[RMDB]
RNA sequence: GGGAACGACUCGAGUAGAGUCGAAAAGAUGAAGUACAAGAGGGCACUGCCUUGAACUUGCACUUGCAGGCCCAGUGGUUCAAGGACAUGAUAUUGCAUGGUGUGCUUGGGAAACAGAGAGUUCAUGUGGCUGCUGCACAGGGUAUGUGGAACAUUGGUCUCGUGUAUAAUUCGUUAUACACGAGACAAAAGAAACAACAACAACAAC
Reactivity to 2A3 in 0.01 (KOAc 150mM, MgCl2 10mM, bicine 150mM(pH8.5), 24C), signal-to-noise 3, nucleotides 027 to 156: g040a020u110g040a040a030g030u110a040c030a060a040g040a090g060g040g010c030a040c120u070g010c030c010u010u010g000a040a020c000u060u180g000c020a020c060u040u070g050c100a060g080g060c020c010c010a000g020u010g010g000u040u000c020a020a010g000g040a070c030a090u120g020a050u100a040u150u140g030c030a040u040g020g060u050g010u020g030c050u010u050g000g020g010a000a060a000c040a040g020a000g010a010g020u070u100c050a030u050g020u030g070g030c050u020g000c010u020g020c010a010c030a060g060g000g000u080a040u100g050u000g010g010a070a060c040a140u040u150g060
Reactivity to DMS in 0.01 (KOAc 150mM, MgCl2 10mM, bicine 150mM(pH8.5), 24C), signal-to-noise 3, nucleotides 027 to 156: g020a200u010g000a070a080g000u010a080c050a040a110g020a130g030g040g030c030a120c090u010g010c020c020u040u010g000a030a100c020u010u020g000c060a070c060u000u000g000c030a050g000g040c030c030c000a110g050u010g000g020u000u000c050a060a070g020g000a130c000a090u020g040a130u010a150u020u010g030c050a100u010g020g000u000g020u000g020c020u010u010g000g010g010a070a050a150c080a140g000a090g020a100g020u010u000c010a070u010g020u000g020g030c030u010g020c020u000g020c020a040c070a120g020g040g010u000a030u000g000u000g020g000a040a070c060a170u000u010g010